The record gives the reactivity of an RNA of 177 nucleotides to DMS and 2A3. The data come from the RNA Mapping Database (RMDB), libraries RFM100 and RFMREP.
RNA sequence: GGGAACGACUCGAGUAGAGUCGAAAAUAGGGAAAGGUGAAGGAGCUAGACUCCUUACCAAGUACUUAGGGGGUGGAGAGUAGUAGGAGUGUUGGAGAAGCCCGGUGCUCCUAUGAAAUCUGGAAAAUGAUUACAGUUGAUUCGUCAACUGUAAUCAAAAAGAAACAACAACAACAAC
Reactivity to DMS in 0.01 (KOAc 150mM, MgCl2 10mM, bicine 150mM(pH8.5), 24C), signal-to-noise 7, nucleotides 027 to 126: u000a020g000g000g000a120a180a180g000g000u010g010a020a010g010g000a020g020c010u030a140g010a250c000u000c000c000u000u000a020c010c000a010a020g000u000a090c010u000u000a010g010g000g010g000g040u010g010g000a010g010a080g000u010a080g000u000a000g000g010a020g020u000g010u000u000g000g000a200g010a140a210g020c230c000c000g000g010u000g000c000u000c000c000u000a010u000g000a070a100a120u000c000u010g020g000a050a070a100a110
Reactivity to 2A3 in 0.01 (KOAc 150mM, MgCl2 10mM, bicine 150mM(pH8.5), 24C), signal-to-noise 2, nucleotides 027 to 126: u030a000g000g000g020a000a000a040g040g010u100g110a030a020g030g010a000g000c040u110a060g090a300c000u010c000c000u000u000a000c000c000a000a010g010u010a010c000u000u000a000g020g010g000g000g000u040g000g010a020g000a000g010u000a000g000u000a000g000g010a000g010u010g030u060u020g040g030a230g080a270a070g140c020c000c000g010g000u000g000c010u010c020c000u000a010u010g000a000a000a020u020c030u030g090g070a010a090a000a120
The reactions ran in a buffer of 150 mM KOAc, 10 mM MgCl2 and 150 mM bicine (pH 8.5), at 24 C.